An RNA of 177 nucleotides, treated with DMS and 2A3 and read out base by base. The reactions ran in a buffer of 150 mM KOAc, 10 mM MgCl2 and 150 mM bicine (pH 8.5), at 24 C. The DMS profile rests on 1,109 reads. The data come from the RNA Mapping Database (RMDB), library OK2TST.
[RMDB]
RNA sequence: GGGAACGACUCGAGUAGAGUCGAAAAGUUGGACAUGCGCAGCACGUUCGGGUGCACCAUGCCGCAACCCAUGACUUCCAGCCAGCCGGUCUGCUUGCACACGCGGCAGCCGUUGCCGCUGCAGAUAGUAAAUGACCUCGUUCGCGAGGUCAUUUACAAAAGAAACAACAACAACAAC
Reactivity to DMS in 0.01 (KOAc 150mM, MgCl2 10mM, bicine 150mM(pH8.5), 24C), signal-to-noise 2, nucleotides 027 to 126: g000u000u000g010g030a100c010a010u000g000c270g040c070a160g000c010a010c010g020u040u010c280g000g030g020u000g020c000a110c130c000a010u000g000c010c000g000c010a040a070c020c010c000a250u000g000a070c130u000u000c080c030a060g000c020c090a140g000c060c000g000g030u000c010u000g010c000u000u010g030c060a120c220a110c220g010c000g000g000c000a010g010c030c030g020u010u000g010c010c160g020c040u000g010c070a080g000a120u010a050
Reactivity to 2A3 in 0.01 (KOAc 150mM, MgCl2 10mM, bicine 150mM(pH8.5), 24C), signal-to-noise 1, nucleotides 027 to 126: g140u230u130g000g090a100c030a010u020g020c060g070c220a080g020c000a000c010g050u260u170c090g270g000g000u010g000c010a010c020c010a000u010g000c000c010g000c030a050a080c010c010c010a000u010g090a060c070u110u000c070c000a020g030c010c000a020g000c050c010g050g030u200c020u020g040c020u170u280g000c010a090c000a050c140g050c030g030g030c030a040g060c020c030g020u000u030g030c010c000g020c000u030g000c000a000g040a070u190a040